[RMDB]
RNA sequence: GGGAACGACUCGAGUAGAGUCGAAAAGAAGUUAGACAAUCGUAAUUCGCGUAAUUAGGCGAGUUCAAGUAACUUUUGCUUGGUGCUUAGUUUUGGCCAUGUCAUGGCUCAGUUGCCAAGCGGCCAAGCAUAAAUCGUGGUUCGCCACGAUUUAUGCAAAAGAAACAACAACAACAAC
Reactivity to 2A3 in 0.01 (KOAc 150mM, MgCl2 10mM, bicine 150mM(pH8.5), 24C), signal-to-noise 5, nucleotides 027 to 126: g040a030a000g030u030u080a090g020a160c140a110a220u180c160g120u250a020a020u030u000c010g000c010g130u210a100a300u200u210a200g030g200c000g000a010g000u000u010c060a070a030g060u020a020a020c000u000u000u050u120g010c000u000u010g000g000u000g010c000u010u010a020g030u040u030u030u050g010g000c060c130a110u270g010u050c010a020u000g020g000c000u010c030a040g000u080u150g000c010c000a000a000g000c010g020g010c000c010a030a030
Reactivity to DMS in 0.01 (KOAc 150mM, MgCl2 10mM, bicine 150mM(pH8.5), 24C), signal-to-noise 2, nucleotides 027 to 126: g000a020a000g000u020u000a010g010a140c230a110a080u070c180g020u040a020a010u000u000c000g030c000g020u020a120a100u040u060a110g000g030c000g000a000g000u000u000c030a090a150g000u010a020a020c000u010u010u000u020g020c010u000u000g000g030u010g000c000u000u010a050g000u000u010u010u020g000g000c010c080a070u020g020u020c110a030u000g000g000c010u030c060a010g000u000u000g020c010c060a030a010g000c030g030g000c000c000a040a020
An RNA of 177 nucleotides, treated with 2A3 and DMS and read out base by base. For DMS, 4,839 sequencing reads were counted. The RNA was probed in 150 mM KOAc, 10 mM MgCl2 and 150 mM bicine (pH 8.5) at 24 C. DMS adducts were read by reverse transcription with MarathonRT. The data come from the RNA Mapping Database (RMDB), library OK1LIB.